Conditions: 150 mM KOAc, 10 mM MgCl2 and 150 mM bicine (pH 8.5), 24 C.
An RNA of 177 nucleotides, treated with DMS and 2A3 and read out base by base.
The 2A3 profile rests on 2,530 reads.
As a SHAPE reagent, 2A3 marks flexible, mostly unpaired nucleotides at the ribose 2'-OH.
DMS adducts were read by reverse transcription with MarathonRT.
RNA sequence: GGGAACGACUCGAGUAGAGUCGAAAACUUCCGCACGGAUACGACCGGAGACGGUAACCAUCUGCUUCACCUCUGGCUCAAUGACAGCGACAUUGCCUGGAUAGAGAGUCAGACGACUUUUGCGGCCGCCGUUUAGAAGAUUCGUCUUCUAAACGGCAAAAGAAACAACAACAACAAC
Reactivity to DMS in 0.01 (KOAc 150mM, MgCl2 10mM, bicine 150mM(pH8.5), 24C), signal-to-noise 3, nucleotides 027 to 126: c130u010u000c010c010g010c040a130c100g000g060a080u010a090c260g010a120c000c020g010g000a220g010a130c010g000g010u000a040a150c100c070a050u000c010u000g000c080u000u000c090a100c090c060u000c010u000g020g040c000u000c000a050a110u010g020a110c000a010g030c010g010a220c230a090u020u010g010c180c010u010g010g000a140u010a040g010a300g000a010g010u000c000a060g000a040c070g000a070c180u000u000u000u020g020c020g000g020c300c130
Reactivity to 2A3 in 0.01 (KOAc 150mM, MgCl2 10mM, bicine 150mM(pH8.5), 24C), signal-to-noise 2, nucleotides 027 to 126: c010u080u000c000c000g000c000a030c020g040g000a050u090a100c060g020a010c000c000g000g000a060g030a030c020g010g010u010a040a080c030c010a010u010c010u060g050c090u110u070c050a020c040c000u000c000u000g020g010c010u010c010a030a030u100g060a050c000a010g000c000g020a050c120a300u080u300g020c010c000u000g010g020a070u070a070g090a010g000a010g010u030c010a000g020a000c040g030a010c010u160u210u140u090g000c020g010g000c050c020